[RMDB]
An RNA of 177 nucleotides, treated with DMS and 2A3 and read out base by base. For 2A3, 1,582 sequencing reads were counted. 2A3 adducts were read by reverse transcription with SuperScript II with manganese. The RNA was probed in 150 mM KOAc, 10 mM MgCl2 and 150 mM bicine (pH 8.5) at 24 C.
RNA sequence: GGGAACGACUCGAGUAGAGUCGAAAAACGCCAUCAGCUUACGAGCUGAUGGCGAAAUAUAUUUCAUACAGGUUAUGUCUAUCGUCACUCACAUAUGCACAUACAGGCUUGUGUUGAAUAUGGUCAAAGAAAGAAUGGAGUUCGCUCCAUUCUUUCUAAAAGAAACAACAACAACAAC
Reactivity to DMS in 0.01 (KOAc 150mM, MgCl2 10mM, bicine 150mM(pH8.5), 24C), signal-to-noise 3, nucleotides 027 to 126: a130c010g000c010c000a000u000c000a000g020c000u000u000a150c170g020a030g030c020u000g000a020u000g030g030c000g000a000a010a010u000a050u020a060u030u000u000c040a050u010a050c050a040g010g000u000u020a040u010g000u020c080u020a040u020c110g000u010c060a070c090u000c110a090c090a070u030a080u000g010c030a050c030a040u020a050c230a100g000g020c040u010u000g000u000g000u000u010g000a030a030u000a080u000g000g000u010c070a060a090
Reactivity to 2A3 in 0.01 (KOAc 150mM, MgCl2 10mM, bicine 150mM(pH8.5), 24C), signal-to-noise 1, nucleotides 027 to 126: a000c000g030c000c000a000u010c000a000g000c000u040u100a080c260g080a050g030c000u000g010a000u000g020g000c000g000a000a000a000u020a000u000a030u000u110u050c040a020u020a070c000a020g000g040u090u090a180u280g030u000c050u020a130u080c070g040u040c010a010c060u120c070a060c050a100u250a050u150g050c050a040c000a030u110a030c020a010g070g000c010u000u000g000u000g010u040u040g020a020a000u030a040u070g050g040u080c050a090a060